[RMDB]
RNA sequence: GGGAACGACUCGAGUAGAGUCGAAAAAAUGUCAUUGUACCUCACCAGGGGCAGCGUGAGGAUGAUAGAGGCGCCCGCCACGCCCACGUAAAAGCCAAAUUGGUAUUUUUGGUACUUGUGCAGCCACAGCUCCGUAAACACGUACCACAGAAGGGUGUCUUCUAACUGUUUUCGAACAGUUAGAAGAAAAAGAAACAACAACAACAAC
Reactivity to 2A3 in 0.01 (KOAc 150mM, MgCl2 10mM, bicine 150mM(pH8.5), 24C), signal-to-noise 4, nucleotides 027 to 156: a000a020u130g010u030c050a050u040u100g030u120a130c010c000u010c010a030c010c030a060g050g000g010g000c010a010g010c000g070u000g010a070g040g010a060u060g020a040u080a080g140a120g060g030c030g020c010c030c010g030c030c020a060c040g000c000c020c000a030c010g040u060a080a000a080a000g000c000c020a060a060a170u120u120g030g000u080a180u060u080u030u060u080g020g000u000a020c010u030u060g020u020g050c050a030g040c040c030a060c050a060g000c020u030c040c040g060u080a050a090a030c040a000c040g040u030a030c010c020a020c050a050g130a080a080g050g000g020u030g060
Reactivity to DMS in 0.01 (KOAc 150mM, MgCl2 10mM, bicine 150mM(pH8.5), 24C), signal-to-noise 3, nucleotides 027 to 156: a050a030u000g000u000c020a120u010u020g030u000a140c010c010u000c020a060c070c040a070g010g010g000g030c050a090g020c120g030u000g000a090g020g000a050u000g000a080u000a110g030a120g020g010c030g030c030c030c100g000c020c020a090c030g030c010c010c020a070c070g010u010a040a040a040a170g020c030c010a010a100a140u010u010g040g020u000a080u000u000u000u000u010g010g010u000a020c030u000u000g020u000g000c040a300g020c040c020a070c040a140g020c010u000c010c000g020u000a080a090a060c020a030c050g030u000a020c020c010a060c110a130g000a080a090g010g080g020u000g010